[RMDB]
RNA sequence: GGGAACGACUCGAGUAGAGUCGAAAAGAGCUACUUUUGUGUAGAUCAUAGACCUGUGUGUAGUUUUCCACUUUGCGCUAAUGGUCUUGUAUUCGGCUUAUACAAGAAUAUGUGCACAGGUAGUCCUAAAGGGAUGCGUUCGCGCAUCCCAAAAGAAACAACAACAACAAC
Reactivity to 2A3 in 0.01 (KOAc 150mM, MgCl2 10mM, bicine 150mM(pH8.5), 24C), signal-to-noise 4, nucleotides 027 to 129: g020a000g000c010u000a010c000u020u160u220u150g210u060g010u040a000g000a050u050c000a040u070a070g100a060c000c000u020g000u020g000u030g010u010a140g070u050u010u050u000c030c010a050c020u050u060u040g030c040g000c050u040a020a110u030g080g010u000c000u020u020g000u010a030u030u130c100g100g000c090u120u040a000u000a010c000a010a010g000a020a000u040a040u080g090u020g010c010a000c000a030g000g000u000a000g020u000c000c000u030a060a020a000
Reactivity to DMS in 0.01 (KOAc 150mM, MgCl2 10mM, bicine 150mM(pH8.5), 24C), signal-to-noise 3, nucleotides 027 to 129: g030a040g040c020u010a010c030u020u070u050u070g050u050g050u020a060g010a110u020c040a100u020a150g010a080c040c010u000g040u000g010u050g030u020a210g020u000u000u000u000c070c050a050c120u020u040u020g020c000g040c110u030a060a180u030g010g030u010c020u030u040g000u010a020u030u000c190g030g050c090u040u000a140u020a020c030a020a070g020a060a030u030a050u040g060u050g030c020a010c020a000g000g000u000a020g000u000c000c000u000a040a140a080